[RMDB]
The record gives the reactivity of an RNA of 207 nucleotides to 2A3 and DMS.
RNA sequence: GGGAACGACUCGAGUAGAGUCGAAAAUUCUUAGUCUGCUUGAUGCCAAAGGAAAAUUUGAGUUUGGAGAAUGUAGUAGAUAUUCUGUCUGGUGGAGACAGCCUCUCACUGGAGUUGCCGGGAUUCUUGUCCUUGAAGACUCUGAUUCUUGCCAUCAGUACUAUACCAGGUUCGCCUGGUAUAGUACAAAAGAAACAACAACAACAAC
Reactivity to 2A3 in 0.01 (KOAc 150mM, MgCl2 10mM, bicine 150mM(pH8.5), 24C), signal-to-noise 2, nucleotides 027 to 156: u050u000c020u080u060a050g020u010c030u050g010c020u050u060g030a020u050g040c010c080a030a070a110g050g050a110a150a130a160u160u140u120g030a070g010u010u090u130g040g010a050g050a110a130u050g000u100a070g010u020a020g040a090u070a060u120u070c040u030g030u000c000u010g050g000u040g000g020a020g020a040c020a020g050c010c000u010c000u020c000a030c040u050g040g020a020g050u050u020g030c040c010g020g000g000a010u180u110c040u140u260g020u040c000c010u000u050g060a010a010g030a010c010u000c040u040g020a070u040u090c010u040u060g070c040c000a050u160c030a080
Reactivity to DMS in 0.01 (KOAc 150mM, MgCl2 10mM, bicine 150mM(pH8.5), 24C), signal-to-noise 1, nucleotides 027 to 156: u010u000c060u000u000a050g020u000c030u010g010c010u000u000g040a120u000g020c050c010a060a100a120g020g010a120a070a100a250u020u000u000g000a150g010u010u010u000g020g010a080g020a060a120u000g020u010a090g050u000a040g010a050u010a100u000u010c040u000g000u000c040u010g030g040u020g000g050a230g000a070c030a130g020c060c000u000c020u010c060a100c050u040g040g010a130g000u000u000g010c120c020g070g000g010a060u020u000c100u000u000g050u010c000c020u000u000g000a050a180g010a030c020u010c010u020g030a050u000u000c040u000u000g020c030c020a070u010c050a270

The reactions ran in a buffer of 150 mM KOAc, 10 mM MgCl2 and 150 mM bicine (pH 8.5), at 24 C.